RNA sequence: GGGAACGACUCGAGUAGAGUCGAAAAGAUCAUAACCGUCACAGAUAACCAGGUGACCAUGCUGAACACGCAUCCAUAAUCCCGCUUCAGCCAGUGUGCGGUGAAUAGCCUGGCAGUUCUCCAGCCGGGGCAGGAUAUGUUUCGACAUAUCCUGCCCAAAAGAAACAACAACAACAAC
Reactivity to DMS in 0.01 (KOAc 150mM, MgCl2 10mM, bicine 150mM(pH8.5), 24C), signal-to-noise 1, nucleotides 027 to 126: g010a030u010c180a050u000a110a110c090c020g010u010c100a050c030a050g050a100u030a100a100c060c100a150g010g000u020g010a050c120c140a080u000g000c070u000g010a050a080c080a020c120g020c070a070u000c040c040a040u000a130a100u000c010c010c010g020c070u000u000c110a070g010c010c060a050g030u000g010u000g000c010g010g040u010g060a090a060u000a140g010c040c030u000g020g010c050a060g000u000u000c000u000c000c010a160g000c050c110g000

Record summary
This 177-nucleotide RNA was probed chemically with DMS. The DMS profile rests on 656 reads. DMS (dimethyl sulfate) methylates the pairing face of unpaired adenines and cytosines. For DMS the reverse transcriptase was MarathonRT.